Chemical mapping of a 177-nucleotide RNA with DMS and 2A3.
The RNA was probed in 150 mM KOAc, 10 mM MgCl2 and 150 mM bicine (pH 8.5) at 24 C.
Values cover nucleotides 27 to 126.
The data come from the RNA Mapping Database (RMDB), libraries RFM100 and RFMREP.
In probing experiments dimethyl sulfate is read out at A N1 and C N3, which are open when not base-paired.

RNA sequence: GGGAACGACUCGAGUAGAGUCGAAAACAUAGUGCCACAGAGGAGAUGGGCCUUGUGCUUACUCAUGGGGGUCUUCUUCUUCUCUCACACAUUGUGCUGAUGUGAUUCUCAUGACUCUUGCUUGGAGGUCUAAGACUCUUUUCGAAGAGUCUUAGACAAAAGAAACAACAACAACAAC
Reactivity to DMS in 0.01 (KOAc 150mM, MgCl2 10mM, bicine 150mM(pH8.5), 24C), signal-to-noise 5, nucleotides 027 to 126: c050a030u020a050g010u010g010c040c080a150c270a040g000a060g000g000a030g000a020u010g010g000g010c010c000u030u000g010u010g000c130u010u040a090c230u020c010a020u010g000g000g000g020g000u010c020u010u020c060u010u010c010u000u000c000u010c020u010c100a130c150a150c070a150u000u010g010u010g010c040u010g010a050u000g010u000g000a110u010u000c030u000c030a090u020g000a170c030u000c010u000u020g020c070u000u000g020g010a090g000
Reactivity to 2A3 in 0.01 (KOAc 150mM, MgCl2 10mM, bicine 150mM(pH8.5), 24C), signal-to-noise 9, nucleotides 027 to 126: c010a020u100a040g050u040g060c020c020a060c040a050g010a010g020g010a010g000a020u060g030g020g040c000c000u020u050g040u040g020c040u170u110a090c030u050c090a050u080g070g000g000g030g040u020c000u120u030c000u030u000c000u030u010c010u020c000u020c010a040c000a010c000a100u060u140g040u040g030c040u090g040a090u060g050u040g060a130u090u010c020u000c030a060u120g030a070c020u010c000u070u140g060c020u050u070g080g030a030g040